[RMDB]
RNA sequence: GGGAACGACUCGAGUAGAGUCGAAAAGAAAGUAAUGGAGUUCAACACUAUAUCCCAUGCAUGACUCUGCAUUUGAUAUCUAACGUUAUUGUGAAAGGAUGAAUUAUCUACGAACUUCACAAAGAAAGGCUAAUGAAUUCUUCGGAAUUCAUUAGCCAAAAGAAACAACAACAACAAC
Reactivity to DMS in 0.01 (KOAc 150mM, MgCl2 10mM, bicine 150mM(pH8.5), 24C), signal-to-noise 2, nucleotides 027 to 126: g030a300a160a020g000u080a040a150u000g000g020a080g000u010u000c070a060a040c080a050c080u000a040u000a040u000c000c000c030a100u000g000c160a110u020g020a000c080u000c300u000g000c130a000u070u010u000g030a040u060a010u040c120u010a070a040c110g000u040u000a090u040u000g070u000g000a030a110a020g050g000a160u010g000a110a070u020u040a080u000c070u000a040c040g030a000a130c000u000u000c000a000c190a100a020a080g000a060a070a130
Reactivity to 2A3 in 0.01 (KOAc 150mM, MgCl2 10mM, bicine 150mM(pH8.5), 24C), signal-to-noise 2, nucleotides 027 to 126: g050a040a080a000g060u300a000a030u180g100g000a000g030u070u070c030a030a030c040a100c110u070a060u000a030u110c000c000c000a000u050g000c000a000u270g070a150c050u010c020u120g010c000a000u000u000u050g010a000u040a050u140c120u020a020a170c050g000u110u290a120u030u200g000u000g030a020a030a000g070g030a010u020g070a000a230u300u040a020u170c050u060a000c070g030a010a000c060u000u000c000a000c000a170a070a010g200a010a040a000